Chemical mapping of a 177-nucleotide RNA with 2A3 and DMS. Source: RMDB library OK1LIB, as collected in RNAgym. Reactivities are given for positions 27 through 126. Reactivities are rounded to 0.1 and cut off at 0 and 3. The RNA was probed in 150 mM KOAc, 10 mM MgCl2 and 150 mM bicine (pH 8.5) at 24 C. DMS (dimethyl sulfate) methylates the pairing face of unpaired adenines and cytosines.
[RMDB]
RNA sequence: GGGAACGACUCGAGUAGAGUCGAAAAGAUAAUCAGGCGAUUGCAGUUACAACAAGAGUUCCUAGAUCAUUACCUAGUAUUCAGAAAAAGGAGUUAGCCUAUGCAGCAAGCAAGUUAUUUUUUGAAACAUUUGCGGAUUAUUCGUAAUCCGCAAAUGAAAAGAAACAACAACAACAAC
Reactivity to 2A3 in 0.01 (KOAc 150mM, MgCl2 10mM, bicine 150mM(pH8.5), 24C), signal-to-noise 5, nucleotides 027 to 126: g020a010u120a060a050u110c060a000g120g000c030g110a140u020u110g020c050a020g080u160u130a110c060a180a020c030a120a010g030a000g070u050u020c000c000u020a010g000a070u120c070a070u060u150a110c030c020u040a030g040u050a150u120u140c060a000g110a050a120a000a010a000g060g020a040g060u050u100a010g000c000c000u020a040u090g010c020a020g000c020a050a090g030c020a060a010g020u010u040a110u050u090u030u020u050u070g070a080a080a010
Reactivity to DMS in 0.01 (KOAc 150mM, MgCl2 10mM, bicine 150mM(pH8.5), 24C), signal-to-noise 3, nucleotides 027 to 126: g030a090u020a030a040u030c030a060g020g030c070g000a080u000u020g010c060a060g000u040u010a070c130a120a120c080a060a020g000a120g000u000u020c020c000u010a080g010a090u020c100a140u000u010a060c070c030u000a060g010u000a030u020u030c060a070g000a100a020a060a160a060g010g010a050g000u010u000a060g010c030c010u000a110u050g010c040a040g020c090a070a080g020c050a030a090g000u000u000a030u000u000u010u000u050u020g010a140a090a080